Structure probing data (DMS and 2A3) for a 177-nucleotide construct. The DMS profile rests on 1,092 reads. The reactions ran in a buffer of 150 mM KOAc, 10 mM MgCl2 and 150 mM bicine (pH 8.5), at 24 C.
RNA sequence: GGGAACGACUCGAGUAGAGUCGAAAAAGAACUGGAUAGUGAGGCAGUAUUCGCAUUAGGAUGAUCAGUGCGUUUCUGAUCUGCAUAAAGUCCUUCGAGUCCAGACAGAAUACAAUCGCCUUGGUAACCUCAGCCGAUCAUUCGUGAUCGGCUGAGGAAAAGAAACAACAACAACAAC
Reactivity to DMS in 0.01 (KOAc 150mM, MgCl2 10mM, bicine 150mM(pH8.5), 24C), signal-to-noise 1, nucleotides 027 to 126: a080g000a110a000c100u040g000g010a000u030a040g000u020g000a010g000g000c000a000g000u000a040u000u000c040g000c140a130u000u050a100g000g000a100u040g000a030u000c040a000g000u000g000c180g000u000u020u010c000u000g000a000u040c000u000g020c080a130u040a000a200a000g000u000c040c020u000u000c160g000a150g000u040c040c030a040g010a030c130a040g000a100a070u010a000c060a010a050u010c180g010c040c000u050u000g010g070u120a210a220
Reactivity to 2A3 in 0.01 (KOAc 150mM, MgCl2 10mM, bicine 150mM(pH8.5), 24C), signal-to-noise 1, nucleotides 027 to 126: a000g000a100a000c000u000g010g000a000u000a110g150u150g070a000g000g000c000a040g070u000a300u000u000c000g000c000a000u150u230a040g060g060a090u300g000a000u260c000a000g000u000g010c000g250u030u100u190c000u000g010a010u000c000u000g000c000a000u090a140a000a000g050u070c000c050u020u030c130g090a000g130u040c000c000a000g060a000c000a000g000a010a010u000a300c050a060a070u010c000g000c000c000u090u080g100g000u060a000a000